This 177-nucleotide RNA was probed chemically with DMS and 2A3.
Values cover nucleotides 27 to 126.
2A3 adducts were read by reverse transcription with SuperScript II with manganese.
RNA sequence: GGGAACGACUCGAGUAGAGUCGAAAACGAUUUAGCCAUGCUAGUCGCACGAGUUUAGACUCGUAGCAUAUAGCUCAGUAACACGUGGCCCAACUACCCUACAGACCGCGAUAACCUCGGGAAACUGCAAACUCGAUUAUUUCGAUAAUCGAGUUUGAAAAGAAACAACAACAACAAC
Reactivity to DMS in 0.01 (KOAc 150mM, MgCl2 10mM, bicine 150mM(pH8.5), 24C), signal-to-noise 9, nucleotides 027 to 126: c030g010a150u010u020u010a100g020c030c080a150u020g010c010u000a020g010u000c230g010c020a040c010g000a030g010u000u010u030a130g010a070c000u000c000g020u000a100g030c020a060u040a180u010a040g010c000u000c250a140g000u020a070a070c140a080c040g010u010g000g000c000c010c020a060a070c100u010a080c030c020c020u010a060c100a090g000a050c030c010g010c040g000a090u020a080a100c120c030u000c040g000g000g010a080a070a090c080u020g000
Reactivity to 2A3 in 0.01 (KOAc 150mM, MgCl2 10mM, bicine 150mM(pH8.5), 24C), signal-to-noise 9, nucleotides 027 to 126: c020g020a020u050u040u160a050g060c040c040a060u120g000c000u010a010g040u070c060g020c020a000c010g000a020g010u070u130u170a190g120a080c000u000c000g010u010a080g010c010a030u100a020u020a130g010c000u020c080a060g030u090a080a010c030a010c130g020u030g030g010c000c010c000a020a030c010u100a050c010c010c000u030a030c020a040g050a080c010c020g050c010g040a010u060a090a050c010c010u010c010g020g000g000a070a060a010c040u070g000